[RMDB]
RNA sequence: GGGAACGACUCGAGUAGAGUCGAAAAUACUAGCUUCGGCUAGUACUGACGGGGUCAUUCCGAGGGACAUGGAAUAUACUGAAGCCUCCACGGUAUCUUCCAACAGCCUCCCCACCGGAAUGACGGAGGCACCCUGGAACCCCGAUUCGUCGGGGAAUAGUCAAUAACUGUUCGCAGUUAUUGACUAAAAAGAAACAACAACAACAAC
Reactivity to 2A3 in 0.01 (KOAc 150mM, MgCl2 10mM, bicine 150mM(pH8.5), 24C), signal-to-noise 2, nucleotides 027 to 156: u030a000c000u000a010g020c010u060u050c300g110g000c000u000a000g000u010a040c060u040g080a050c090g120g040g040g010u010c010a000u000u000c000c000g020a070g030g010g010a070c080a170u130g000g000a000a010u000a000u000a010c020u010g040a090a030g000c010c000u000c020c000a020c000g000g020u000a000u000c060u010u030c020c010a110a060c070a250g170c050c060u100c000c020c000c010a080c040c020g000g000a010a000u000g000a010c010g000g000a000g000g010c000a010c020c000c000u020g030g080a080a090c000c000c000c000g010a000u040u070c170g020u000c000g020g000g030g000a030a030
Reactivity to DMS in 0.01 (KOAc 150mM, MgCl2 10mM, bicine 150mM(pH8.5), 24C), signal-to-noise 2, nucleotides 027 to 156: u010a010c030u010a000g020c000u000u020c290g050g000c000u060a000g010u000a010c010u000g020a100c030g030g000g050g020u000c010a060u010u010c010c000g010a120g000g060g000a080c090a300u010g010g000a040a040u000a030u000a020c020u000g000a040a130g060c020c020u000c000c010a300c030g000g010u000a000u000c020u010u000c040c000a070a180c140a220g020c060c030u020c040c030c000c010a110c180c040g020g020a070a040u010g010a010c030g020g010a090g050g050c010a050c020c070c000u030g000g010a150a260c000c010c020c000g010a030u010u010c190g030u010c040g030g000g060g020a020a100
Conditions: 150 mM KOAc, 10 mM MgCl2 and 150 mM bicine (pH 8.5), 24 C. An RNA of 207 nucleotides, treated with 2A3 and DMS and read out base by base. For DMS the reverse transcriptase was MarathonRT.